[RMDB]
RNA sequence: GGGAACGACUCGAGUAGAGUCGAAAACCAGGUUGCCUAAGGAGGGGUGAACCGGCCCAGGUCGGAAACGGAGCAGGUCAAAACUCCCGUGCUGAUCAGUAGUGGGAUCGCGCCUGUGAAUAGCCACAUACUUUACGGUUUUCGAACCGUAAAGUAUAAAAGAAACAACAACAACAAC
Reactivity to 2A3 in 0.01 (KOAc 150mM, MgCl2 10mM, bicine 150mM(pH8.5), 24C), signal-to-noise 7, nucleotides 027 to 126: c010c000a010g030g030u060u090g040c000c020u090a080a050g060g030a040g010g060g000g010u030g030a030a040c020c000g030g010c010c000c010a050g000g050u040c040g020g000a100a060a040c040g010g010a040g020c050a010g000g050u100c020a010a040a040a110c010u010c000c000c010g010u020g000c030u050g050a210u090c080a030g070u110a030g060u090g020g040g020a040u040c030g000c010g010c030c010u040g010u010g060a070a070u100a060g030c010c000a060c010
Reactivity to DMS in 0.01 (KOAc 150mM, MgCl2 10mM, bicine 150mM(pH8.5), 24C), signal-to-noise 8, nucleotides 027 to 126: c020c010a110g010g020u000u000g010c030c030u010a100a110g010g020a080g010g000g000g000u010g010a080a090c070c020g010g020c020c030c050a110g010g010u000c040g010g010a060a080a060c070g000g000a120g010c060a040g010g000u010c120a070a060a120a150c120u000c010c000c020g020u000g000c020u020g000a070u030c130a060g020u010a050g020u010g000g000g010a060u000c080g000c140g000c020c020u000g000u000g000a070a080u010a100g000c040c050a110c190
Chemical mapping of a 177-nucleotide RNA with 2A3 and DMS. It was measured as part of the RMDB libraries RFM100 and RFMREP. For DMS the reverse transcriptase was MarathonRT. For 2A3 the reverse transcriptase was SuperScript II with manganese. The reactions ran in a buffer of 150 mM KOAc, 10 mM MgCl2 and 150 mM bicine (pH 8.5), at 24 C.